[RMDB]
RNA sequence: GGGAACGACUCGAGUAGAGUCGAAAAAGAGUCACUACGGUGACUCAACACUUUAUUUCUUCUACUCGGAUCGUUCGGCACGUACCUGCCGAUAAAGAAUGGAGUUAGAGCUGGUACGCCAGCUCAAAACCGAGUACUCAUUCGUGAGUACUCGGUUAAAAGAAACAACAACAACAAC
Reactivity to 2A3 in 0.01 (KOAc 150mM, MgCl2 10mM, bicine 150mM(pH8.5), 24C), signal-to-noise 5, nucleotides 027 to 126: a000g000a000g000u000c010a000c020u050a030c280g100g000u000g000a000c000u000c000a000a010c070a020c010u130u140u120a110u050u110u000c010u050u020c000u010a000c000u010c000g000g020a040u000c000g010u000u000c010g000g020c010a060c050g110u130a090c000c010u020g020c020c010g050a080u160a160a090a030g130a040a120u200g080g030a060g050u130u110a050g030a010g010c010u010g010g030u030a010c130g040c030c000a010g000c000u000c000a020a050
Reactivity to DMS in 0.01 (KOAc 150mM, MgCl2 10mM, bicine 150mM(pH8.5), 24C), signal-to-noise 4, nucleotides 027 to 126: a100g000a030g000u000c000a010c000u000a120c130g040g020u000g000a010c000u000c010a040a060c260a120c250u020u020u030a110u030u000u010c010u040u000c000u000a000c000u010c010g000g000a050u000c000g010u010u000c000g000g010c000a020c130g010u030a040c080c080u000g010c040c000g020a160u050a080a090a040g010a090a130u010g010g000a140g000u010u010a090g000a020g000c030u000g000g020u020a080c220g030c020c000a020g000c000u010c020a000a040